This 207-nucleotide RNA was probed chemically with 2A3 and DMS. For DMS the reverse transcriptase was MarathonRT. Source: RMDB library RNAMAK, as collected in RNAgym. For DMS, 2,858 sequencing reads were counted.
RNA sequence: GGGAACGACUCGAGUAGAGUCGAAAAUUCGGCUUCGGCCGAAAGGUACGGGGUCAUCUGGAGUUAAGGCUUUUGACGCUCUGAAGCCUCCACGGAGCGAUAAGCCUACACGUUGAAAGAUGACGGAGGCACCCUCGUCGCGCUAUUCGUAGCGCAACCUUCACUAUAUUUUCGAAUAUAGUGAAGGAAAAGAAACAACAACAACAAC
Reactivity to 2A3 in 0.01 (KOAc 150mM, MgCl2 10mM, bicine 150mM(pH8.5), 24C), signal-to-noise 6, nucleotides 027 to 156: u010u010c000g010g010c010u080u040c250g130g000c000c000g020a030a010a000g040g000u100a060c260g190g010g060g010u020c010a010u000c010u010g030g030a070g050u130u230a260a150g050g000c040u040u080u120u230g200a080c060g000c000u010c000u000g010a050a010g000c010c000u000c000c000a030c020g000g000a000g000c000g040a050u050a090a000g000c010c010u090a060c110a010c110g130u090u070g050a060a040a010g000a020u000g010a000c010g000g000a010g000g010c000a040c000c010c000u080c060g220u120c100g000c000g000c010u020a050u100u120c180g120u090a010g000c000g010c000a010a030
Reactivity to DMS in 0.01 (KOAc 150mM, MgCl2 10mM, bicine 150mM(pH8.5), 24C), signal-to-noise 1, nucleotides 027 to 156: u020u000c010g020g000c000u000u020c300g040g020c000c000g000a000a020a010g020g030u000a080c070g020g020g030g040u000c000a060u000c010u000g010g020a200g000u000u020a150a030g040g010c020u000u000u000u000g010a270c030g000c050u020c030u000g000a040a120g060c040c000u000c020c040a300c000g000g000a030g020c000g040a160u000a040a040g020c000c000u000a040c230a060c000g000u000u000g000a250a160a050g030a030u000g000a070c020g000g040a060g000g070c030a090c020c000c040u010c090g030u000c100g000c020g040c000u020a070u000u010c250g000u000a010g040c000g020c010a000a040